[RMDB]
RNA sequence: GGGAACGACUCGAGUAGAGUCGAAAACACAUGGGAUGGCCCUGACAAUCGUCGUAUUGCAUGUCGGCGAUGGUUUUGGAGUAAAUCUCGAUCAAACCGCUUGGCGUGCCCAACGGCUCCAGGUCCGAGUAUCACCUGGAUUCGUCCAGGUGAUACUAAAAGAAACAACAACAACAAC
Reactivity to DMS in 0.01 (KOAc 150mM, MgCl2 10mM, bicine 150mM(pH8.5), 24C), signal-to-noise 3, nucleotides 027 to 126: c130a070c190a120u030g010g000g010a120u010g000g000c050c010c020u010g010a060c110a070a030u020c060g000u010c000g000u020a050u010u020g010c200a090u010g000u000c000g010g000c010g020a030u000g000g020u000u000u030u000g020g020a020g010u010a080a070a070u010c000u010c190g000a050u070c130a080a100a060c100c010g010c040u000u020g010g000c070g000u000g010c010c110c100a090a090c060g020g010c020u020c090c060a060g000g010u000c010c080g020
Reactivity to 2A3 in 0.01 (KOAc 150mM, MgCl2 10mM, bicine 150mM(pH8.5), 24C), signal-to-noise 8, nucleotides 027 to 126: c110a010c020a140u210g020g040g020a040u070g060g030c030c010c000u010g010a020c050a060a090u090c040g030u010c000g020u100a060u080u290g150c120a070u170g030u070c010g010g000c000g020a030u040g010g000u040u020u070u090g110g030a130g010u110a100a160a160u080c010u000c020g050a100u070c060a030a050a080c030c000g030c080u060u170g020g000c030g050u060g010c010c020c020a050a020c020g020g000c010u030c030c020a020g000g030u010c030c010g020
An RNA of 177 nucleotides, treated with DMS and 2A3 and read out base by base. 2A3 adducts were read by reverse transcription with SuperScript II with manganese. Source: RMDB library OK1LIB, as collected in RNAgym. The RNA was probed in 150 mM KOAc, 10 mM MgCl2 and 150 mM bicine (pH 8.5) at 24 C.